[RMDB]
RNA sequence: GGGAACGACUCGAGUAGAGUCGAAAAGCUCACUUUUCCGCUUCUAACUUCCAUUUGCAGAGUUCAAGUAAUCUGGAAAUGGAUUAGAAUCGUGGAAAAGUUAGUAAAAGACAUGGUUCGCCAUGUCCAAUGUUGUCAACUUCGGUUGACAACAUUGAAAAGAAACAACAACAACAAC
Reactivity to 2A3 in 0.01 (KOAc 150mM, MgCl2 10mM, bicine 150mM(pH8.5), 24C), signal-to-noise 3, nucleotides 027 to 126: g010c000u000c010a000c000u010u010u010u010c000c010g010c010u010u000c000u000a040a080c090u050u010c010c000a010u020u010u030g080c010a000g040a060g080u110u150c100a200a050g060u080a140a210u000c020u000g040g000a000a010a000u000g000g000a000u000u000a000g010a010a030u090c060g000u030g010g000a010a000a000a000g000u010u000a000g000u010a040a090a030a040g000a000c000a000u010g020g020u050u090c180g030c050c000a000u010g000u030c010
Reactivity to DMS in 0.01 (KOAc 150mM, MgCl2 10mM, bicine 150mM(pH8.5), 24C), signal-to-noise 3, nucleotides 027 to 126: g000c000u000c070a020c000u000u000u000u000c000c000g020c010u000u000c000u010a010a020c150u010u000c010c000a010u000u000u000g010c000a010g000a040g000u010u000c160a110a190g010u000a040a080u010c010u010g000g010a000a010a010u000g000g010a030u000u000a000g000a010a020u010c220g030u000g010g000a010a000a000a000g000u000u000a010g010u000a060a080a110a110g000a010c000a010u000g000g020u010u020c240g010c010c000a020u000g010u000c000
An RNA of 177 nucleotides, treated with 2A3 and DMS and read out base by base. For 2A3, 4,300 sequencing reads were counted. It was measured as part of the RMDB library RFMREP. Values cover nucleotides 27 to 126.